[RMDB]
RNA sequence: GGGAACGACUCGAGUAGAGUCGAAAAACAAGUAUGCUUGCUACCGGCUAUUAUUACAAAAACAGAACAGAUGAUAUUACCAAGAUACUGGGCGCGGAGAGAAUGCAAAUGGACAAAUACAAAUGGUUGGCAAAUUACCGAGAGAUACCAAUUAAUGCACCGUACUUUCAUUCGUGAAAGUACGGUGAAAAGAAACAACAACAACAAC
Reactivity to DMS in 0.01 (KOAc 150mM, MgCl2 10mM, bicine 150mM(pH8.5), 24C), signal-to-noise 1, nucleotides 027 to 156: a150c010a120a030g010u000a010u010g030c000u010u000g050c010u000a040c100c000g070g030c120u010a040u010u000a090u000u000a200c050a040a070a060a060a110c040a120g000a120a030c020a080g010a070u000g000a110u000a030u000u000a060c040c020a040a140g000a030u000a070c030u010g050g010g000c040g030c040g010g010a100g030a100g000a090a100u020g000c080a030a080a040u000g000g010a120c060a020a020a040u000a010c100a000a040a080u040g000g030u000u010g010g030c070a040a090a080u000u010a200c030c010g020a210g050a110g020a040u000a020c010c000a050a090u000u000a050a160u000g000
Reactivity to 2A3 in 0.01 (KOAc 150mM, MgCl2 10mM, bicine 150mM(pH8.5), 24C), signal-to-noise 2, nucleotides 027 to 156: a000c030a020a020g060u060a040u140g020c030u050u060g030c020u060a030c020c000g030g030c060u030a030u190u050a130u150u090a130c100a030a210a070a070a000c040a020g040a110a020c030a070g050a060u130g000a020u060a060u150u070a050c050c000a000a070g010a040u060a060c020u110g070g030g000c060g000c030g030g000a020g000a010g010a050a060u080g050c030a000a000a070u030g020g020a010c030a070a100a040u100a070c120a020a100a050u110g020g000u030u050g010g040c000a040a100a100u050u020a070c040c020g030a030g020a000g000a120u050a080c010c040a010a010u050u100a090a030u230g000
An RNA of 207 nucleotides, treated with DMS and 2A3 and read out base by base. 2A3 adducts were read by reverse transcription with SuperScript II with manganese. Reactivities are rounded to 0.1 and cut off at 0 and 3. Source: RMDB library OK3TST, as collected in RNAgym. Values cover nucleotides 27 to 156. The DMS profile rests on 1,378 reads.